[RMDB]
RNA sequence: GGGAACGACUCGAGUAGAGUCGAAAAGAUAUGGAUCUUAAGGGAGGACUGUGGCGGUCGGAAACGACCGAAUCAGUCCUUUGAUCUUAAGAGUCCUAAGUCAAAGGUUAUCGUUCGCGAUAACCAAGAAUGUUCUUAUGUUCGCAUAAGAACAUUCAAAAGAAACAACAACAACAAC
Reactivity to 2A3 in 0.01 (KOAc 150mM, MgCl2 10mM, bicine 150mM(pH8.5), 24C), signal-to-noise 3, nucleotides 027 to 126: g010a000u030a010u050g000g000a000u020c000u010u010a000a000g020g000g010a010g000g000a000c000u010g030u110g250g270c070g010g030u000c000g000g000a000a010a000c010g000a000c000c000g010a000a030u050c010a000g010u000c000c000u020u010u000g000a010u000c000u010u010a000a010g020a020g300u150c000c000u010a030a000g010u010c050a120a070a120g000g000u000u000a010u010c020g000u040u090c300g000c020g110a010u000a000a000c000c000a000a010
Reactivity to DMS in 0.01 (KOAc 150mM, MgCl2 10mM, bicine 150mM(pH8.5), 24C), signal-to-noise 7, nucleotides 027 to 126: g000a020u000a100u010g000g000a280u000c000u000u000a010a010g000g000g000a000g020g010a010c000u000g000u010g020g020c100g020g010u000c000g020g000a020a030a060c000g020a010c000c000g010a050a040u010c010a010g000u010c000c000u000u000u010g000a020u010c000u000u000a000a010g000a030g010u000c000c000u000a010a110g000u000c010a090a120a110g000g010u000u000a000u000c000g010u000u010c240g020c010g010a020u000a000a000c000c000a050a040
Structure probing data (2A3 and DMS) for a 177-nucleotide construct. For 2A3 the reverse transcriptase was SuperScript II with manganese. For 2A3, 10,960 sequencing reads were counted.